[RMDB]
Structure probing data (DMS) for a 177-nucleotide construct. The data come from the RNA Mapping Database (RMDB), library 15KREP. Values cover nucleotides 27 to 126.
RNA sequence: GGGAACGACUCGAGUAGAGUCGAAAACCUCUCCCGUCCUGGUGAAGGGAGAUUCCGGAACGUUUAGCAUUUGAGGGACAAAGCCGCCCCCGGGCGCUCCCCUCGGAGAUGUUCCAGGUGGGUUCACGUUGAAUACUCUGUUCGCAGAGUAUUCAACAAAAGAAACAACAACAACAAC
Reactivity to DMS in 0.01 (KOAc 150mM, MgCl2 10mM, bicine 150mM(pH8.5), 24C), signal-to-noise 1, nucleotides 027 to 126: c010c000u000c000u000c000c010c020g010u000c000c070u020g050g030u020g010a020a070g030g000g000a020g010a080u000u020c040c040g000g010a020a000c030g040u000u000u000a100g020c090a150u000u000u000g010a030g000g020g000a070c040a210a140a060g000c090c080g040c010c010c020c180c300g000g010g040c010g040c020u000c060c010c000c000u020c040g000g010a010g010a010u000g000u010u000c000c000a100g040g000u000g020g000g000u020u000c050a070c170